Notes:
Structure probing data (DMS and 2A3) for a 177-nucleotide construct. The 2A3 profile rests on 2,349 reads. For DMS the reverse transcriptase was MarathonRT. For 2A3 the reverse transcriptase was SuperScript II with manganese. For DMS, 4,599 sequencing reads were counted.
RNA sequence: GGGAACGACUCGAGUAGAGUCGAAAAGGGUUUGGAUUACAUCAAUAGUCACAUGAGCAGAAGUAAACAGAACAAGAAGUACUGCGGAUAUUCAAGUUCAAAGUUCACACUAUCGCAAUAAAUUGAAUCUCUCUUAAACUUUCGAGUUUAAGAGAGAAAAAGAAACAACAACAACAAC
Reactivity to DMS in 0.01 (KOAc 150mM, MgCl2 10mM, bicine 150mM(pH8.5), 24C), signal-to-noise 5, nucleotides 027 to 126: g010g010g010u000u010u000g010g020a080u000u000a080c080a070u000c060a080a090u000a060g010u010c050a050c120a070u000g010a090g020c030a030g010a060a070g020u000a040a050a080c080a090g000a060a030c040a060a220g010a050a060g000u000a070c060u000g010c100g020g010a070u010a060u010u000c070a030a200g000u000u000c030a030a080a080g000u000u000c050a060c040a070c100u000a060u010c070g020c070a070a060u010a030a060a120u000u000g000a090a120
Reactivity to 2A3 in 0.01 (KOAc 150mM, MgCl2 10mM, bicine 150mM(pH8.5), 24C), signal-to-noise 3, nucleotides 027 to 126: g040g030g010u060u050u100g030g030a040u050u050a030c040a050u080c020a030a100u090a060g040u030c010a000c010a130u100g030a010g040c020a040g020a110a010g020u090a030a120a060c030a040g050a030a020c010a070a040g090a030a020g050u030a030c030u040g060c010g040g000a040u050a030u160u070c030a030a020g020u000u030c000a090a060a000g020u050u030c030a000c000a020c040u080a090u170c060g000c060a010a100u120a180a100a030u130u100g040a130a110
Source information: The RNA was probed in 150 mM KOAc, 10 mM MgCl2 and 150 mM bicine (pH 8.5) at 24 C.